Chemical mapping of a 207-nucleotide RNA with 2A3. Source: RMDB library RNAMAK, as collected in RNAgym.

[RMDB]
RNA sequence: GGGAACGACUCGAGUAGAGUCGAAAACGCUGGGUGAAUAGCAUCGCAGAUAGAUGCCAGUCACGAAUCCACCUGAAGCGCGCACGGGUGGACUAUGACUGGCAUCUGUAGAUGCUAUUCACCUGUGCUGAAGCGCGCACGGCAACCGAAAGGUGCGGAGCAUUAACCUCUUCGGAGGUUAAUGCUCAAAAGAAACAACAACAACAAC
Reactivity to 2A3 in 0.01 (KOAc 150mM, MgCl2 10mM, bicine 150mM(pH8.5), 24C), signal-to-noise 1, nucleotides 027 to 156: c050g000c020u030g010g000g000u010g000a020a000u000a000g000c000a010u000c020g040c150a050g030a160u140a000g010a000u020g000c030c000a010g030u010c000a010c240g160a120a300u000c000c000a000c000c000u020g050a250a040g030c000g000c000g000c040a010c000g000g020g010u000g010g030a000c080u190a190u240g000a000c000u000g000g000c000a000u000c000u000g000u000a000g000a000u000g000c000u000a000u000u000c000a000c000c000u000g000u000g000c000u020g010a050a010g010c020g000c010g000c010a020c020g070g000c000a050a130c010c000g080a090a030a040g040g000u030g020c080g050